[RMDB]
This 207-nucleotide RNA was probed chemically with 2A3. It was measured as part of the RMDB library RSTRND.

RNA sequence: GGGAACGACUCGAGUAGAGUCGAAAAGCUCAACCAAAAGUAACUGCGAACAACAUCGUUCCUUUCGCUCGUAAGGCUGCUCCUGUAGCUGCUUAAACGCCACAAACUUUCUGGCUCGAGCGUCUAGUCGUAGACUCCGUUAAUACGCCUAGACUUAGAACCGAUUACCCUUCGGGGUAAUCGGUUCAAAAGAAACAACAACAACAAC
Reactivity to 2A3 in 0.01 (KOAc 150mM, MgCl2 10mM, bicine 150mM(pH8.5), 24C), signal-to-noise 1, nucleotides 027 to 156: g010c020u000c020a080a070c000c010a050a080a000a020g050u050a100a160c150u090g060c000g040a010a020c020a020a040c000a250u100c020g000u000u000c000c010u070u070u010c050g000c000u040c010g040u030a080a020g020g010c030u040g040c010u010c160c020u160g180u300a000g020c020u040g020c000u080u020a140a300a000c000g030c060c020a070c040a060a160a050c070u090u130u050c170u040g010g050c040u020c120g000a000g010c010g040u000c000u020a020g000u000c000g000u000a000g010a090c040u000c160c020g040u020u120a080a000u000a090c000g000c000c000u000a000g040a000c020u060u000a020